[RMDB]
RNA sequence: GGGAACGACUCGAGUAGAGUCGAAAAGUGCAGAGUGAAAUUCAUAAGUGCGGCGCCAAUGUGGCGUAACGACCCGGUACUCCGCGCAGUCGAGCUGUAAACGUUCUGUGUUGGCCUUCGGGCCUCACUUACCUCACGUUUUCGAACGUGAGGUAAGAAAAGAAACAACAACAACAAC
Reactivity to 2A3 in 0.01 (KOAc 150mM, MgCl2 10mM, bicine 150mM(pH8.5), 24C), signal-to-noise 4, nucleotides 027 to 126: g140u040g020c030a000g050a000g050u090g070a120a060a060u080u090c040a060u050a210a000g000u010g080c000g000g040c030g030c000c010a070a160u300g100u300g080g000c010g000u020a020a030c000g030a050c000c040c000g000g000u040a020c030u000c030c000g000c000g010c030a010g030u080c020g010a010g010c030u000g080u150a020a090a060c040g020u070u010c020u010g030u000g020u020u130g040g010c000c000u000u000c260g030g000g000c000c000u000c010a020
Reactivity to DMS in 0.01 (KOAc 150mM, MgCl2 10mM, bicine 150mM(pH8.5), 24C), signal-to-noise 3, nucleotides 027 to 126: g010u020g000c000a060g000a050g010u010g010a110a060a090u030u010c060a070u020a130a060g010u010g050c050g000g000c060g000c030c050a150a080u050g020u030g020g030c010g020u010a060a070c090g020a110c040c000c020g010g030u010a080c090u020c020c040g000c130g000c030a070g020u040c030g000a080g010c020u020g000u010a050a060a140c100g000u020u020c040u030g050u030g000u030u000g010g030c010c000u000u040c160g000g010g000c000c010u000c020a050
An RNA of 177 nucleotides, treated with 2A3 and DMS and read out base by base. As a SHAPE reagent, 2A3 marks flexible, mostly unpaired nucleotides at the ribose 2'-OH. 2A3 adducts were read by reverse transcription with SuperScript II with manganese. Reactivities are rounded to 0.1 and cut off at 0 and 3.